Structure probing data (2A3 and DMS) for a 177-nucleotide construct. The data come from the RNA Mapping Database (RMDB), library OK2TRN. For DMS the reverse transcriptase was MarathonRT. 2A3 adducts were read by reverse transcription with SuperScript II with manganese. The RNA was probed in 150 mM KOAc, 10 mM MgCl2 and 150 mM bicine (pH 8.5) at 24 C.
RNA sequence: GGGAACGACUCGAGUAGAGUCGAAAAUUGGAGGAAUAUAAGAGAGAUGAUGAAUCAGAAAAGGAAAUCAUUGAAAGCACAGUUAUUAAUCCAAUAGCUGAAUCAAAUGGGAUUAGAUGGAGUGAUGCGCACAUUCUAUAUUCGUAUAGAAUGUGCGAAAAGAAACAACAACAACAAC
Reactivity to 2A3 in 0.01 (KOAc 150mM, MgCl2 10mM, bicine 150mM(pH8.5), 24C), signal-to-noise 3, nucleotides 027 to 126: u060u050g050g020a060g000g010a090a040u100a010u080a300a020g050a010g020a010g000a020u050g010a010u030g060a050a070u070c050a050g120a030a100a010a000g050g010a030a050a020u020c010a010u000u060g040a060a050a030g020c050a020c010a040g010u040u020a020u050u050a090a060u070c060c000a010a000u050a030g000c030u030g040a030a060u080c010a010a040a100u110g050g010g030a020u050u080a050g030a110u100g040g000a040g050u080g040a020u150g050
Reactivity to DMS in 0.01 (KOAc 150mM, MgCl2 10mM, bicine 150mM(pH8.5), 24C), signal-to-noise 5, nucleotides 027 to 126: u000u010g030g010a070g030g010a060a050u010a070u010a130a090g000a090g010a160g010a060u010g000a040u000g000a110a080u000c090a080g010a050a050a090a070g010g000a090a060a050u010c030a020u000u000g010a100a120a100g030c140a120c040a020g010u000u010a030u000u000a070a100u010c130c100a030a030u010a060g010c030u000g000a070a050u010c090a040a070a080u000g010g010g000a060u000u000a050g000a070u000g000g000a070g010u010g010a070u000g010